[RMDB]
RNA sequence: GGGAACGACUCGAGUAGAGUCGAAAAGGAUCAAGCGUACGCCCAUCGAUUGUUUCUUGUUCUGUCUUCGCGUUAUCCCUAUCUUACAUAGGUGUGGUGUUGCCGUGUCACUUAUUUACUGGUCGUGACAUGGGGGUAUGUUCGCAUACCCCCAUGUAAAAGAAACAACAACAACAAC
Reactivity to DMS in 0.01 (KOAc 150mM, MgCl2 10mM, bicine 150mM(pH8.5), 24C), signal-to-noise 4, nucleotides 027 to 126: g010g000a060u000c050a060a070g010c030g010u000a100c110g020c020c030c040a110u010c100g000a100u000u010g010u000u000u000c000u000u000g010u000u000c030u000g000u000c010u000u000c050g000c060g020u010u000a080u000c050c000c010u000a060u000c100u010u010a090c170a110u010a050g020g010u000g020u000g000g010u000g000u000u000g020c040c040g010u010g010u000c030a040c060u000u000a070u000u000u000a120c070u010g010g010u010c110g030u000g000
Reactivity to 2A3 in 0.01 (KOAc 150mM, MgCl2 10mM, bicine 150mM(pH8.5), 24C), signal-to-noise 2, nucleotides 027 to 126: g110g000a070u070c050a030a020g020c050g080u020a020c050g010c000c010c010a040u060c030g230a280u030u030g030u070u030u000c000u040u080g080u170u000c020u010g090u010c030u010u050c050g000c020g050u080u040a060u040c000c010c010u010a050u010c080u050u160a080c000a090u080a050g090g030u050g030u050g040g050u020g060u110u070g050c040c000g000u000g000u020c000a000c050u080u060a070u120u090u080a090c040u090g050g050u090c050g070u050g030